[RMDB]
RNA sequence: GGGAACGACUCGAGUAGAGUCGAAAAGCCGUAUUCGUACGGCCGAAAGGGGUCGGUCGUUGAAAUCACCAAAAAGAGCGAGGAUCCUGAAGCCUCCACGGGGGAGCUCUGGUGAUGGAGACCGACGGAGGCACCCAUACAGCCACUUCGGUGGCAACAAACUGUAUCCCUUCGGGGAUACAGUUUGAAAAGAAACAACAACAACAAC
Reactivity to 2A3 in 0.01 (KOAc 150mM, MgCl2 10mM, bicine 150mM(pH8.5), 24C), signal-to-noise 1, nucleotides 027 to 156: g030c030c000g020u000a040u070u100c130g020u010a010c000g010g000c000c040g080a140a040a090g060g010g020g000u000c010g000g000u000c000g040u040u010g000a000a000a010u020c000a000c030c000a030a080a300a250a050g020a000g000c030g010a180g010g010a070u010c000c010u020g060a130a040g020c010c010u000c040c010a020c040g000g000g000g000g050a000g000c010u000c010u020g000g000u000g000a000u020g020g010a010g000a000c000c010g010a000c000g000g030a020g000g000c040a060c000c010c000a060u170a230c040a020g000c000c160a020c000u120u230c250g080g000u010g020g000c000a010a000
Chemical mapping of a 207-nucleotide RNA with 2A3. The RNA was probed in 150 mM KOAc, 10 mM MgCl2 and 150 mM bicine (pH 8.5) at 24 C. For 2A3, 864 sequencing reads were counted.